[RMDB]
Chemical mapping of a 207-nucleotide RNA with DMS and 2A3. DMS (dimethyl sulfate) methylates the pairing face of unpaired adenines and cytosines. The data come from the RNA Mapping Database (RMDB), library RNAMAK. Reactivities are given for positions 27 through 156. 2A3 adducts were read by reverse transcription with SuperScript II with manganese. The DMS profile rests on 1,855 reads.

RNA sequence: GGGAACGACUCGAGUAGAGUCGAAAAGGGGUCGGUUGAGGCGAAAGACAUGCUCGUAUCUGAAGCCUCCACGGAUAUAGAGCAACAGCUUUCGCUCCCCACCAACCGACGGAGGCACCCAAACGACAUAUCUACCCUUCGGGGUAGAUAUGUCGAACCAUUUUCUUAGAUUCGUCUAAGAAAAUGGAAAAGAAACAACAACAACAAC
Reactivity to DMS in 0.01 (KOAc 150mM, MgCl2 10mM, bicine 150mM(pH8.5), 24C), signal-to-noise 1, nucleotides 027 to 156: g010g020g070g060u000c010g020g010u000u000g000a300g000g020c010g030a030a100a040g010a080c050a180u010g020c000u010c030g010u000a000u000c000u000g000a030a180g000c020c010u000c050c000a300c020g030g010a010u010a090u000a100g010a040g050c000a170a170c080a140g010c000u010u000u000c000g020c010u010c220c040c010c040a300c090c030a020a020c010c000g030a030c060g000g010a030g060g040c010a050c110c010c000a060a100a090c020g000a030c000a030u000a010u000c010u000a000c020c000c000u000u010c300g080g020g020g000u000a000g000a030u000a010u000g030u000c000g010a030a110
Reactivity to 2A3 in 0.01 (KOAc 150mM, MgCl2 10mM, bicine 150mM(pH8.5), 24C), signal-to-noise 4, nucleotides 027 to 156: g130g030g030g030u020c020g000g010u010u010g010a010g010g020c010g020a000a000a000g040a060c110a180u280g000c010u000c000g010u000a000u000c010u020g040a190a030g020c010c010u000c000c010a010c010g010g000a000u020a010u120a200g000a010g000c050a040a160c100a190g020c010u000u010u000c010g000c010u030c020c010c010c000a020c020c000a000a000c000c000g000a010c030g010g010a010g000g000c010a030c000c040c000a070a110a040c030g000a000c000a000u010a000u000c000u020a000c000c020c040u090u140c300g000g000g000g000u000a000g000a000u000a000u000g000u000c000g000a000a010